[RMDB]
RNA sequence: GGGAACGACUCGAGUAGAGUCGAAAAGCCAACGCCCAUAAUGCGGGCUGUUGCCCGGCAUCCAACGCCAUUCAUGGCCAUAUCAAUGAUUUUCUGGUGCGUACCGGGUUGAGAAGCGGUGUAAGUGUAAGUGACACCUAUUCGUAGGUGUCACUUAAAAAGAAACAACAACAACAAC
Reactivity to DMS in 0.01 (KOAc 150mM, MgCl2 10mM, bicine 150mM(pH8.5), 24C), signal-to-noise 3, nucleotides 027 to 126: g010c140c020a090a080c060g020c010c010c010a170u010a100a100u020g010c120g020g010g000c010u020g020u000u000g010c010c010c020g010g000c030a060u000c010c060a060a090c110g000c010c020a050u010u010c070a050u010g010g010c050c070a050u000a060u000c080a060a080u010g000a060u000u010u010u000c120u010g000g020u010g010c090g000u010a060c050c010g010g000g010u000u000g030a120g000a120a100g000c060g000g000u000g020u010a040a090g010u000g010
Reactivity to 2A3 in 0.01 (KOAc 150mM, MgCl2 10mM, bicine 150mM(pH8.5), 24C), signal-to-noise 1, nucleotides 027 to 126: g050c000c000a080a000c050g000c000c000c000a080u270a220a080u260g050c060g000g000g000c080u070g060u000u130g010c000c000c000g020g000c050a070u050c060c040a040a030c060g010c010c000a070u090u110c050a050u100g080g000c020c030a130u110a030u170c020a100a140u110g110a120u070u060u090u150c070u080g050g010u040g020c040g000u020a040c000c040g110g000g000u010u050g060a110g040a060a010g020c000g000g010u040g000u050a080a130g070u050g040